RNA sequence: GGGAACGACUCGAGUAGAGUCGAAAAUGAAUUCAUAACAGGAGAUAACUUGCUUAAGACCUGACUGUUUUUAAAAGCGAAUGCCAGUGAGUGAAAUGCCAGCUCCCUGUACAGUUACUAGAGCUCCCCGUUCCAUACUGUUCGCAGUAUGGAACGGAAAAGAAACAACAACAACAAC
Reactivity to 2A3 in 0.01 (KOAc 150mM, MgCl2 10mM, bicine 150mM(pH8.5), 24C), signal-to-noise 3, nucleotides 027 to 126: u110g020a000a120u060u020c040a030u060a220a030c000a020g020g020a080g030a100u050a080a100c040u050u070g030c000u080u150a080a000g050a160c000c000u000g050a080c020u020g110u000u010u000u040u180a050a070a010a000g070c040g050a070a050u150g020c010c000a040g060u000g090a020g010u040g040a040a090a050u110g010c000c000a010g010c000u020c020c000c000u000g000u020a000c000a080g050u040u040a020c030u010a000g000a050g070c010u080c010c010
Reactivity to DMS in 0.01 (KOAc 150mM, MgCl2 10mM, bicine 150mM(pH8.5), 24C), signal-to-noise 2, nucleotides 027 to 126: u040g000a080a080u010u000c060a030u010a110a080c060a000g000g010a040g000a120u020a070a080c100u010u000g020c160u020u000a050a090g010a080c050c030u010g030a130c070u000g000u000u030u000u000u040a030a110a090a070g010c020g010a050a040u020g000c030c000a020g020u030g000a100g000u020g000a070a100a030u010g000c020c000a030g000c020u000c030c020c020u000g000u010a030c040a040g020u000u040a070c070u010a050g000a140g030c030u000c010c010
Source information: Chemical mapping of a 177-nucleotide RNA with 2A3 and DMS. The reactions ran in a buffer of 150 mM KOAc, 10 mM MgCl2 and 150 mM bicine (pH 8.5), at 24 C. Source: RMDB libraries RFM100 and RFMREP, as collected in RNAgym. DMS adducts were read by reverse transcription with MarathonRT.